Structure probing data (2A3 and DMS) for a 207-nucleotide construct. The data come from the RNA Mapping Database (RMDB), library OK3TST. The 2A3 profile rests on 1,865 reads.

RNA sequence: GGGAACGACUCGAGUAGAGUCGAAAAGGUGCUGUUUCCACAUUCCGGGCCAGUUUGACGAGUUUCGUAAGAUGUAAACAAGCCAAAAUUUUGUCGAGGAGAUGGAUACAUAGGACAAAAGCCACCUAGUUUAGGAUCCUUGAUAGAAGCGUCACUGAAUACGUUUCGAUUUCGAUCGAAACGUAUUAAAAGAAACAACAACAACAAC
Reactivity to 2A3 in 0.01 (KOAc 150mM, MgCl2 10mM, bicine 150mM(pH8.5), 24C), signal-to-noise 3, nucleotides 027 to 156: g100g000u050g010c050u020g040u010u020u000c030c010a040c010a080u100u010c050c010g000g020g040c070c000a020g020u030u070u120g050a020c010g010a030g050u020u030u070c020g010u050a120a070g070a110u060g070u190a020a070a050c060a080a030g050c030c020a020a060a090a120u110u160u030u050g040u020c050g010a040g010g020a040g040a070u070g020g020a030u040a070c080a070u080a060g030g050a010c050a070a180a020a000g000c020c010a040c000c010u020a050g030u030u120u080a050g030g010a010u010c000c000u000u050g030a020u050a100g030a040a010g030c010g020u020c010a020c090u030g020
Reactivity to DMS in 0.01 (KOAc 150mM, MgCl2 10mM, bicine 150mM(pH8.5), 24C), signal-to-noise 3, nucleotides 027 to 156: g000g000u010g040c020u010g000u000u000u000c020c020a110c070a210u010u000c030c020g000g030g040c010c050a070g010u000u000u000g030a060c010g000a300g020u000u000u000c060g040u010a080a140g020a160u000g010u030a060a050a040c060a080a300g040c020c040a010a050a060a180u000u000u000u000g030u000c010g020a070g040g000a080g000a150u010g010g000a130u000a050c060a130u010a080g010g020a300c060a050a040a100a080g050c020c050a060c040c010u000a060g040u000u000u000a090g030g010a170u000c000c000u000u000g010a140u000a040g000a040a080g030c080g020u000c020a110c060u000g000